[RMDB]
RNA sequence: GGGAACGACUCGAGUAGAGUCGAAAAAGCUACUGGAGCGCGCCAACCAUAAGCUUAAACUCAUGGUGCCGAUGACGUUGAUGAUUAUCUUCGUGCUGUUGUAUCUGGCGUUCCGUCGGGUGGGCGAAUACCCCUCUAUCUUCGGAUAGAGGGGUAUAAAAGAAACAACAACAACAAC
Reactivity to DMS in 0.01 (KOAc 150mM, MgCl2 10mM, bicine 150mM(pH8.5), 24C), signal-to-noise 3, nucleotides 027 to 126: a050g000c030u000a060c110u010g020g010a060g020c070g010c130g010c030c040a160a060c020c030a020u010a050a060g020c030u010u010a060a120a150c030u000c030a020u000g020g010u000g000c040c020g000a050u000g000a040c060g010u000u000g000a030u000g020a150u000u020a110u000c040u010u000c030g020u000g010c040u010g000u000u000g010u000a060u000c060u010g010g000c030g010u010u000c030c030g000u000c070g010g010g010u000g010g010g010c080g000a120
Reactivity to 2A3 in 0.01 (KOAc 150mM, MgCl2 10mM, bicine 150mM(pH8.5), 24C), signal-to-noise 2, nucleotides 027 to 126: a020g010c000u030a020c040u100g040g010a030g050c030g010c000g010c050c010a030a030c010c010a050u020a060a050g000c020u110u200a060a070a080c020u030c040a060u030g010g010u090g000c070c060g050a060u070g020a040c010g030u070u030g040a040u020g070a130u110u130a030u150c000u040u040c040g070u090g040c050u080g020u100u080g050u070a050u030c050u060g040g010c020g050u070u020c030c000g000u020c050g000g060g040u020g000g020g040c020g000a010
This 177-nucleotide RNA was probed chemically with DMS and 2A3. The 2A3 profile rests on 1,287 reads. For DMS the reverse transcriptase was MarathonRT. 2A3 adducts were read by reverse transcription with SuperScript II with manganese.